[RMDB]
RNA sequence: GGGAACGACUCGAGUAGAGUCGAAAAGGUCUCAAUCUACGUUCGAAACGUCCACGGCGGCAUGUGACAGCGAAGCACAGGCACGCACGUCCAGAAGUGACCGCGUUAGAGCAGUGCUGGAGCAUGGUCUUCCAGAAGUAUUCGUACUUCUGGAAGAAAAAGAAACAACAACAACAAC
Reactivity to DMS in 0.01 (KOAc 150mM, MgCl2 10mM, bicine 150mM(pH8.5), 24C), signal-to-noise 7, nucleotides 027 to 126: g010g020u000c030u000c020a150a120u010c070u000a070c070g000u000u000c080g010a070a110a090c060g020u000c050c040a070c050g010g010c050g010g010c020a040u000g000u000g000a170c040a080g010c060g010a120a100g000c020a060c050a110g010g010c090a080c030g000c030a050c160g010u000c030c040a160g000a110a130g010u010g000a040c020c080g020c030g000u000u000a080g010a120g020c030a050g000u010g010c020u000g000g000a180g010c050a050u000g010g010
Reactivity to 2A3 in 0.01 (KOAc 150mM, MgCl2 10mM, bicine 150mM(pH8.5), 24C), signal-to-noise 5, nucleotides 027 to 126: g080g040u010c010u000c000a070a100u030c040u110a020c030g050u030u080c040g060a110a070a050c030g030u000c020c040a060c030g040g000c030g030g000c030a010u060g030u020g040a040c020a020g020c030g050a100a010g020c020a030c020a080g100g030c040a020c050g010c020a060c050g010u000c030c010a130g040a300a020g140u110g130a040c010c020g040c000g010u030u100a060g010a020g090c030a020g020u050g080c010u010g020g020a030g000c020a040u050g080g020

Background:
An RNA of 177 nucleotides, treated with DMS and 2A3 and read out base by base. For 2A3 the reverse transcriptase was SuperScript II with manganese. The DMS profile rests on 9,934 reads. The reactions ran in a buffer of 150 mM KOAc, 10 mM MgCl2 and 150 mM bicine (pH 8.5), at 24 C.